[RMDB]
RNA sequence: GGGAACGACUCGAGUAGAGUCGAAAACAUCUUUCCUCCCUACACAGUGACUCCAGCUUGGGAGGGGCAGGGCUAGGCUGAGCAAGCACUCCCUGUGGUGUCUGCCUGCCACGUGCAGCUCUGGAGUAAAACCUGGAGAAGUUCGCUUCUCCAGGAAUCCAUAAUCAUACUUCGGUAUGAUUAUGGAAAAAGAAACAACAACAACAAC
Reactivity to 2A3 in 0.01 (KOAc 150mM, MgCl2 10mM, bicine 150mM(pH8.5), 24C), signal-to-noise 3, nucleotides 027 to 156: c020a070u030c090u090u120u050c010c000u070c010c000c000u190a110c150a040c060a160g130u050g080a020c000u000c000c000a010g000c010u030u060g020g000g000a020g020g010g010g000c010a010g000g020g000c050u250a020g030g000c010u060g020a040g180c110a070a000g000c010a010c040u030c020c030c000u020g010u020g020g010u020g010u020c040u040g060c020c000u070g050c030c020a180c120g080u170g000c010a020g010c030u040c020u030g000g000a000g000u010a020a000a000a000c000c000u000g010g000a000g000a000a000g020u040u090c160g020c090u000u000c000u010c000c000a000g000g000a000a000
Reactivity to DMS in 0.01 (KOAc 150mM, MgCl2 10mM, bicine 150mM(pH8.5), 24C), signal-to-noise 1, nucleotides 027 to 156: c060a070u000c100u000u000u000c030c010u000c020c000c000u020a190c120a130c090a140g000u000g010a080c030u010c010c030a180g040c140u020u000g010g010g010a030g000g020g010g010c020a050g050g010g000c020u010a030g000g000c030u000g010a260g020c090a130a040g030c000a100c020u000c000c020c080u000g000u000g000g020u010g030u010c000u020g010c080c030u020g030c030c030a080c090g010u000g050c010a030g070c040u000c030u000g050g000a100g030u000a090a090a140a120c030c000u000g000g000a040g000a080a010g020u000u010c300g030c010u000u000c010u000c000c000a000g000g010a000a020